[RMDB]
RNA sequence: GGGAACGACUCGAGUAGAGUCGAAAAGCGGGGCUCGAAACGCGGGUAGCGCGCACGCCCGGCGAAGAAGUUCGCAUACGCGGUGUGCUGGUGCCGAAGUGUCUGCUGCAACGGCACGCUCGACACCUAGAACAUACCGUAUUCGUACGGUAUGUAAACACUUAUGCAUCUUCGGAUGCAUAAGUGUAAAAGAAACAACAACAACAAC
Reactivity to 2A3 in 0.01 (KOAc 150mM, MgCl2 10mM, bicine 150mM(pH8.5), 24C), signal-to-noise 4, nucleotides 027 to 156: g020c020g020g010g070g000c010u030c070g070a130a120a040c100g010c040g090g020g030u070a040g100c040g000c000g010c070a010c000g000c000c010c000g000g000c040g000a010a000g080a050a040g190u020u030c010g010c030a040u100a300c060g050c090g010g000u020g000u010g000c040u070g020g030u020g000c020c000g010a060a040g000u020g020u060c080u080g060c070u120g000c050a080a060c030g000g020c010a000c040g010c050u000c020g010a010c010a030c010c010u050a070g040a110a000c000a000u000a000c000c000g010u000a010u010u080c180g030u000a000c000g000g000u000a000u000g000u010a020a080
Reactivity to DMS in 0.01 (KOAc 150mM, MgCl2 10mM, bicine 150mM(pH8.5), 24C), signal-to-noise 2, nucleotides 027 to 156: g000c040g000g000g040g020c050u000c050g050a070a090a090c030g000c000g030g010g020u000a110g020c030g000c120g030c000a070c100g000c000c010c000g020g010c020g000a070a080g000a180a170g010u000u000c030g030c030a090u000a300c030g020c030g040g010u000g020u000g050c030u020g030g010u010g000c000c000g000a080a170g010u010g010u010c060u000g000c060u010g030c080a180a170c130g010g010c000a010c000g000c050u000c010g000a090c030a040c020c000u010a140g010a100a050c000a000u000a020c020c010g000u000a040u000u010c250g040u000a030c010g020g000u000a000u000g010u000a080a110

The record gives the reactivity of an RNA of 207 nucleotides to 2A3 and DMS. DMS (dimethyl sulfate) methylates the pairing face of unpaired adenines and cytosines. For 2A3 the reverse transcriptase was SuperScript II with manganese.